[RMDB]
RNA sequence: GGGAACGACUCGAGUAGAGUCGAAAAAAAAGAUAUGGAUGUGUACGAUAGAAAGCAGCGUUGAAAGACGCUCGGAAACGAGCGUCUGGAGCUGACUAAAGAUCGACUACACAUCCUAAGUCAAAAAGUAGUAGAAAAUGUUCGCAUUUUCUACUACAAAAGAAACAACAACAACAAC
Reactivity to 2A3 in 0.01 (KOAc 150mM, MgCl2 10mM, bicine 150mM(pH8.5), 24C), signal-to-noise 1, nucleotides 027 to 126: a000a000a000a030g080a000u100a000u090g000g010a010u010g010u020g010u030a050c040g030a070u040a100g230a060a180a010g030c030a000g010c000g300u300u000g000a040a010a010g000a010c010g030c000u030c010g000g020a010a030a000c010g000a000g000c000g000u000c010u000g040g010a000g020c000u010g140a140c000u000a050a040a020g230a100u080c060g120a100c070u050a000c000a000c010a000u000c000c010u000a000a010g000u000c060a100a000a000a000a240
Reactivity to DMS in 0.01 (KOAc 150mM, MgCl2 10mM, bicine 150mM(pH8.5), 24C), signal-to-noise 2, nucleotides 027 to 126: a120a040a130a040g010a030u000a300u000g000g000a020u000g020u000g000u010a030c040g000a130u000a080g010a200a160a080g020c010a000g020c000g000u000u020g010a230a050a020g000a010c000g040c000u000c000g020g000a010a050a150c000g000a020g020c010g010u000c000u000g000g010a040g020c000u000g000a070c030u010a050a150a180g000a100u010c010g010a140c300u000a000c000a000c020a000u010c000c020u000a010a070g000u020c030a040a120a070a130a130